[RMDB]
RNA sequence: GGGAACGACUCGAGUAGAGUCGAAAAGCGAUACCCUAAAUUGAGUGUCUAAUGCAUUUUUGUCUAUCGGUUCUUUGCCCACUAAAUUUUUGGUAAUUGGUAUCAUUUGAUCUCCAAAGAUUGAGUCAAAUUACGGAAGUUUCGACUUCCGUAAUUUAAAAGAAACAACAACAACAAC
Reactivity to 2A3 in 0.01 (KOAc 150mM, MgCl2 10mM, bicine 150mM(pH8.5), 24C), signal-to-noise 2, nucleotides 027 to 126: g040c040g030a050u050a050c000c010c000u050a050a100a180u090u120g010a010g050u080g050u080c080u110a130a040u140g020c030a040u030u010u020u130u100g090u070c020u000a040u030c030g120g000u110u020c000u150u160u100g010c010c000c010a020c040u050a070a070a070u050u060u010u010u030g060g020u060a120a070u140u070g040g070u140a060u110c010a040u090u040u260g010a000u000c010u000c030c000a010a000a020g000a020u000u070g060a020g020u030c060
Reactivity to DMS in 0.01 (KOAc 150mM, MgCl2 10mM, bicine 150mM(pH8.5), 24C), signal-to-noise 4, nucleotides 027 to 126: g020c070g010a060u000a040c030c020c030u000a050a090a110u000u000g010a050g020u000g010u010c070u010a110a110u010g020c020a060u010u000u010u010u010g010u000c050u000a060u010c040g000g010u000u000c010u000u000u010g010c010c010c020a080c050u000a040a020a050u000u000u000u010u000g000g000u010a050a110u000u010g010g010u000a070u010c080a160u000u010u000g010a030u000c090u000c010c010a010a010a030g000a020u000u000g010a050g000u000c170
The record gives the reactivity of an RNA of 177 nucleotides to 2A3 and DMS. For DMS the reverse transcriptase was MarathonRT. The data come from the RNA Mapping Database (RMDB), library OK2TST. For DMS, 5,557 sequencing reads were counted.